Overview:
This 207-nucleotide RNA was probed chemically with 2A3.

RNA sequence: GGGAACGACUCGAGUAGAGUCGAAAAAUCCGUGGAUAUCGGGUGCGCACCGCUCCUCCUCCGGCUGUUCUCCUUCACAGCUAUGACCCAUGCGCCGCACUGGCAGUGUCCCGCUUCGUGUGCAAAAAAAACCGCCAGUACUUCGGUACUGGCGGAAGUACGUUAUACACUUCGGUGUAUAACGUACAAAAGAAACAACAACAACAAC
Reactivity to 2A3 in 0.01 (KOAc 150mM, MgCl2 10mM, bicine 150mM(pH8.5), 24C), signal-to-noise 2, nucleotides 027 to 156: a010u020c020c020g050u060g030g060a030u040a030u190c040g000g000g040u050g000c040g020c000a070c070c030g050c070u040c000c040u020c020c020u070c040c020g030g000c020u040g010u100u030c080u050c100c060u120u090c050a030c030a090g000c040u080a060u300g040a110c000c020c040a030u080g010c000g020c040c000g050c040a030c060u040g060g000c030a030g020u000g070u120c000c000c000g030c020u060u040c040g050u040g000u000g050c090a000a000a020a000a000a040a000a060c020c000g000c000c000a000g000u000a000c000u000u030c180g060g000u000a010c000u000g010g010c000g000g000a000a000